[RMDB]
RNA sequence: GGGAACGACUCGAGUAGAGUCGAAAAAGAUAUGGAGCGUCCAAGCUCUUGGAUUUAUACAGCCGAAAGGGUCGGAAACGACCCUAGUAGCUGCUGUAUUGUCAGAGCUAAGGACGCUCCUAAGUCACUUUUAUGAUAUGUUCGCAUAUCAUAAAAGAAAAGAAACAACAACAACAAC
Reactivity to DMS in 0.01 (KOAc 150mM, MgCl2 10mM, bicine 150mM(pH8.5), 24C), signal-to-noise 6, nucleotides 027 to 126: a090g000a050u010a300u000g000g010a020g000c010g020u000c010c000a290a100g000c000u000c000u010u010g030g010a030u000u010u010a010u000a020c000a010g020c010c030g000a160a210a200g000g000g020u010c000g000g000a100a120a260c000g020a010c000c000c000u000a010g010u000a180g010c300u010g030c010u000g010u000a010u000u000g010u000c010a020g010a010g010c000u010a120a150g010g010a020c000g000c000u000c000c000u000a010a070g010u000c030a240
Reactivity to 2A3 in 0.01 (KOAc 150mM, MgCl2 10mM, bicine 150mM(pH8.5), 24C), signal-to-noise 2, nucleotides 027 to 126: a000g020a010u060a020u160g000g000a000g010c000g020u000c020c010a020a020g000c000u000c010u040u070g010g000a010u050u230u000a030u000a010c000a000g010c010c010g020a040a060a020g000g000g000u000c020g010g010a070a100a090c020g010a000c000c000c010u000a000g000u010a000g010c160u110g010c000u020g000u010a010u000u030g000u000c000a020g000a010g000c020u090a100a100g000g000a000c000g000c000u000c010c000u000a000a000g020u000c010a010